Structure probing data (2A3) for a 207-nucleotide construct.
[RMDB]
RNA sequence: GGGAACGACUCGAGUAGAGUCGAAAAUCAAUAACUGGGGACUGUAGCCUAGUCACGGGGACACGUCAUUGGUGCCGGGUAUCAGAGACGAAGGCCAAGAGAUGAAAGAGAAACAGAGACUGAACCCAAAAGAGGCAGACACACAGGAAGAUGGAGACGCAUUAUAAUGCUUCGGCAUUAUAAUGCGAAAAGAAACAACAACAACAAC
Reactivity to 2A3 in 0.01 (KOAc 150mM, MgCl2 10mM, bicine 150mM(pH8.5), 24C), signal-to-noise 1, nucleotides 027 to 156: u050c010a020a070u090a030a180c020u050g000g000g010g050a000c020u050g200u220a010g030c000c060u070a030g050u010c000a010c090g060g000g010g000a030c050a030c080g140u090c050a110u060u070g030g060u130g050c060c010g030g000g000u110a050u110c030a030g010a000g050a120c060g090a110a000g050g030c000c000a000a000g050a000g000a000u160g040a040a050a000g020a010g030a020a000a120c060a030g020a000g030a080c020u020g010a050a130c000c010c000a000a210a000a020g020a020g010g070c000a010g000a020c020a000c000a000c010a040g040g030a020a020g040a010u060g000g000a090g040a000